[RMDB]
RNA sequence: GGGAACGACUCGAGUAGAGUCGAAAACGUGCACAAUCGACUUUCAGUGCACCUUCUUCGUAGUCAAGAGCGGAAAGUGUUUUGAAAUAUCAAAGUGCAUCUGGUAACCAAAGACACCAAUGCCAGCGCUAUAUGCGGCAUUCGUGCCGCAUAUAGCAAAAGAAACAACAACAACAAC
Reactivity to 2A3 in 0.01 (KOAc 150mM, MgCl2 10mM, bicine 150mM(pH8.5), 24C), signal-to-noise 2, nucleotides 027 to 126: c030g010u020g020c010a010c000a030a190u080c090g050a020c040u040u040u050c040a000g000u020g000c020a010c000c000u010u020c000u020u030c020g080u050a160g090u080c160a140a060g040a010g100c030g040g000a030a010a000g030u000g010u050u030u060u050g020a010a020a030u150a040u060c030a000a070a060g000u040g000c000a030u010c040u000g030g000u040a070a030c090c050a160a120a020g110a050c090a030c090c000a020a040u040g000c010c010a060g060c040
Reactivity to DMS in 0.01 (KOAc 150mM, MgCl2 10mM, bicine 150mM(pH8.5), 24C), signal-to-noise 2, nucleotides 027 to 126: c150g010u000g000c010a040c000a130a110u000c080g010a000c290u000u000u000c030a030g000u000g020c020a020c010c060u000u000c020u000u020c050g020u030a110g000u000c300a020a110g000a120g020c070g020g000a050a010a050g000u000g000u000u020u000u000g000a020a030a020u000a130u000c020a010a130a090g000u010g000c020a030u010c090u030g000g000u000a040a180c160c130a020a070a120g000a060c180a070c090c060a030a050u000g020c000c020a050g000c300
This 177-nucleotide RNA was probed chemically with 2A3 and DMS. It was measured as part of the RMDB library OK2TST. The 2A3 profile rests on 1,837 reads.